[RMDB]
RNA sequence: GGGAACGACUCGAGUAGAGUCGAAAAGCGCGCCCAACGCGCGGGCGUCCGGUGGAACCUGCUUGGCUUGGGACCGGAAGACCUGAGGGGUACGUCCGGGGUAGGAGUGAAAUCCCGUAAUCCUGGACAUCUAUUGGGUAUUCGUACCCAAUAGAUGAAAAGAAACAACAACAACAAC
Reactivity to 2A3 in 0.01 (KOAc 150mM, MgCl2 10mM, bicine 150mM(pH8.5), 24C), signal-to-noise 9, nucleotides 027 to 126: g020c020g000c000g020c020c010c030a060a070c050g040c020g000c030g010g010g000c030g040u010c010c010g020g020u060g040g080a090a090c010c010u040g030c070u190u220g100g010c040u050u080g030g010g050a060c010c000g020g020a030a010g050a070c000c020u040g040a070g040g050g010g000u060a040c050g020u000c010c000g000g000g000g020u040a050g010g040a030g010u090g050a050a060a050u040c000c000c000g020u070a030a040u030c010c000u010g000g020a000
Reactivity to DMS in 0.01 (KOAc 150mM, MgCl2 10mM, bicine 150mM(pH8.5), 24C), signal-to-noise 9, nucleotides 027 to 126: g020c050g000c030g000c030c020c070a130a160c070g010c040g020c040g000g010g010c080g010u000c030c010g010g010u010g010g010a100a120c030c010u000g010c070u020u020g020g010c080u010u010g010g010g010a100c020c010g000g010a080a050g000a110c030c030u000g000a120g000g000g000g010u020a060c100g010u000c000c010g000g000g000g010u010a110g000g000a050g010u010g010a080a120a140u020c010c000c060g010u030a090a050u020c030c000u000g000g000a200
This 177-nucleotide RNA was probed chemically with 2A3 and DMS. The RNA was probed in 150 mM KOAc, 10 mM MgCl2 and 150 mM bicine (pH 8.5) at 24 C. Reactivities are rounded to 0.1 and cut off at 0 and 3. The data come from the RNA Mapping Database (RMDB), libraries RFM100 and RFMREP.